Source information: The data come from the RNA Mapping Database (RMDB), library OK2TST. This 177-nucleotide RNA was probed chemically with 2A3 and DMS. The reactions ran in a buffer of 150 mM KOAc, 10 mM MgCl2 and 150 mM bicine (pH 8.5), at 24 C. Reactivities are given for positions 27 through 126. For DMS the reverse transcriptase was MarathonRT.
RNA sequence: GGGAACGACUCGAGUAGAGUCGAAAAUCGCCACCCUCAGGCUCAAGUCCCAGGAGGCCUCCUCCGCUGACUUGGGUGAACAGCUCUGAGUUCCGGAGAGGGUUCGGUCUGCGGAGAAGCGCGCGAGCGAACGAAGCAGGUUCGCCUGCUUCGUUCGAAAAGAAACAACAACAACAAC
Reactivity to 2A3 in 0.01 (KOAc 150mM, MgCl2 10mM, bicine 150mM(pH8.5), 24C), signal-to-noise 3, nucleotides 027 to 126: u070c010g020c010c000a050c030c000c000u030c050a020g090g000c020u030c070a080a060g060u040c020c010c000a010g060g040a040g050g000c000c000u040c000c000u000c020c000g010c050u040g000a020c000u100u120g130g040g010u100g040a030a030c040a050g030c010u020c010u070g180a160g100u180u060c080c020g010g020a030g020a020g020g110g000u020u030c020g000g030u000c030u030g000c020g020g010a070g010a050a020g050c080g000c020g010c040g070a040g080
Reactivity to DMS in 0.01 (KOAc 150mM, MgCl2 10mM, bicine 150mM(pH8.5), 24C), signal-to-noise 6, nucleotides 027 to 126: u010c060g020c020c020a150c070c040c040u000c080a120g020g020c010u010c060a060a110g010u000c010c070c070a200g010g000a130g000g020c110c040u000c030c000u010c000c010g020c080u010g000a020c010u000u000g020g020g020u020g010a040a050c070a090g010c020u000c000u010g010a180g000u010u010c100c030g010g000a040g000a050g010g000g000u000u000c030g010g000u000c010u000g010c020g010g010a050g010a070a050g020c120g000c070g020c040g000a110g020